[RMDB]
RNA sequence: GGGAACGACUCGAGUAGAGUCGAAAAAACCAGUGGAGGUAGGGUGGGUUUUGACUUCCAUUGUUUAACGGUAUCUUCGAUUAAUCGAACUGAUAAGGGAGUCAGAUCCUUAUUUAGAUGAAUUGUGUCUGCCUAUACGUUUCGACGUAUAGGCAGAAAAAGAAACAACAACAACAAC
Reactivity to 2A3 in 0.01 (KOAc 150mM, MgCl2 10mM, bicine 150mM(pH8.5), 24C), signal-to-noise 1, nucleotides 027 to 126: a000a000c030c000a030g000u070g040g090a300g000g060u260a010g110g000g040u300g040g000g050u000u040u030u170g020a010c000u000u000c000c000a070u090u070g090u040u190u110a030a010c050g030g060u030a050u030c000u040u000c010g060a030u050u140a110a090u090c020g000a030a050c070u030g040a020u000a050a010g000g020g000a000g000u000c000a000g000a020u040c020c000u010u080a160u130u190u100a040g040a170u090g030a020a130u060u100g070u000g060
Reactivity to DMS in 0.01 (KOAc 150mM, MgCl2 10mM, bicine 150mM(pH8.5), 24C), signal-to-noise 1, nucleotides 027 to 126: a090a020c020c000a070g000u010g010g000a160g020g010u000a040g000g000g000u000g000g000g030u000u000u000u000g030a040c010u000u000c000c000a140u000u000g040u000u000u010a060a090c140g010g010u000a040u000c100u000u000c030g020a090u000u000a050a090u000c010g000a040a070c180u000g010a010u000a040a080g010g000g000a020g000u000c050a070g010a050u020c050c080u020u000a050u010u010u000a080g010a060u010g030a140a080u010u010g010u000g010
Chemical mapping of a 177-nucleotide RNA with 2A3 and DMS. High DMS reactivity at an A or C suggests that its Watson-Crick edge is free. The 2A3 profile rests on 664 reads.